[RMDB]
Structure probing data (2A3 and DMS) for a 177-nucleotide construct.
The reactions ran in a buffer of 150 mM KOAc, 10 mM MgCl2 and 150 mM bicine (pH 8.5), at 24 C.
Values cover nucleotides 27 to 126.
DMS adducts were read by reverse transcription with MarathonRT.
RNA sequence: GGGAACGACUCGAGUAGAGUCGAAAAGAUAUGGACUUGUCUCGCAGACCCGAUGAAAUCGGAAACGAUGGAGGGUCUGAACUACGAGGUCAAGUCCUAAGUCAAAAGGGGCACUUCGGUGCCCCAACAUGACCUUUAGGUUCGCCUAAAGGUCAUGAAAAGAAACAACAACAACAAC
Reactivity to 2A3 in 0.01 (KOAc 150mM, MgCl2 10mM, bicine 150mM(pH8.5), 24C), signal-to-noise 2, nucleotides 027 to 126: g010a010u080a030u150g000g010a000c000u010u030g000u020c000u000c010g030c000a000g000a010c000c000c000g240a300u060g010a080a110a010u030c000g010g030a070a030a080c010g010a000u010g030g020a020g030g020g010u000c000u000g000a010a010c030u070a040c030g000a000g000g030u210c040a000a000g010u000c000c000u000a000a000g060u020c000a040a050a050a150g030g010g000g000c000a010c000u060u090c300g120g000u000g010c070c000c000c000a000a010
Reactivity to DMS in 0.01 (KOAc 150mM, MgCl2 10mM, bicine 150mM(pH8.5), 24C), signal-to-noise 4, nucleotides 027 to 126: g010a070u000a300u010g000g010a000c000u000u000g010u010c000u000c000g000c010a030g000a020c000c000c000g020a130u000g010a090a110a030u000c000g010g000a120a070a190c000g020a020u000g020g000a070g020g000g010u010c010u000g020a030a040c090u020a300c020g010a020g000g000u000c020a010a030g010u000c000c000u000a000a070g010u000c020a100a060a120a130g020g000g000g020c000a000c010u000u010c200g020g020u000g010c010c000c010c010a000a020